Annotation:
The record gives the reactivity of an RNA of 207 nucleotides to DMS and 2A3. The data come from the RNA Mapping Database (RMDB), library OK3TST.
RNA sequence: GGGAACGACUCGAGUAGAGUCGAAAAAUUACUUUACAAUGUACGUAAUGUACUUCGUAAUUAAUGAAGAACCUAGGGCUUCAUAAUGCAGUUAAAUUGGUUCCUUUUUCCUCCUGCCUCAUUCAUUUGCUUCUACUCUUUGAUGAGUGCAGCUAGAGAUCGGAGUAAUAUUCGUAUUACUCCGAUCAAAAGAAACAACAACAACAAC
Reactivity to DMS in 0.01 (KOAc 150mM, MgCl2 10mM, bicine 150mM(pH8.5), 24C), signal-to-noise 3, nucleotides 027 to 156: a040u000u000a020c060u010u010u000a020c010a020a030u000g020u000a010c000g020u000a170a150u000g010u010a010c010u010u000c070g020u000a010a020u010u000a110a050u000g010a080a070g000a040a100c030c020u000a120g000g010g010c010u000u000c030a060u000a110a130u000g020c020a060g020u000u010a040a140a120u000u010g010g000u000u000c010c000u000u000u000u000u000c030c010u000c040c010u000g010c020c000u000c010a020u000u010c070a080u010u000u000g010c090u010u000c130u000a070c040u000c030u000u000u000g020a060u000g010a050g010u010g050c040a030g030c020u000a050g000a260
Reactivity to 2A3 in 0.01 (KOAc 150mM, MgCl2 10mM, bicine 150mM(pH8.5), 24C), signal-to-noise 9, nucleotides 027 to 156: a000u030u010a020c050u050u050u010a030c050a080a100u150g000u010a010c030g100u220a110a190u300g000u000a010c020u030u050c020g000u000a000a020u030u020a020a040u090g050a050a080g010a020a010c010c030u050a060g080g060g000c020u060u060c080a120u120a300a080u230g020c040a020g020u050u100a050a120a190u160u080g020g000u020u020c020c000u060u130u020u050u020c000c010u020c000c010u010g000c000c010u010c000a020u210u030c010a030u030u100u110g070c070u150u110c050u120a120c050u020c000u100u060u080g010a010u020g010a010g010u130g000c000a000g000c010u070a040g000a000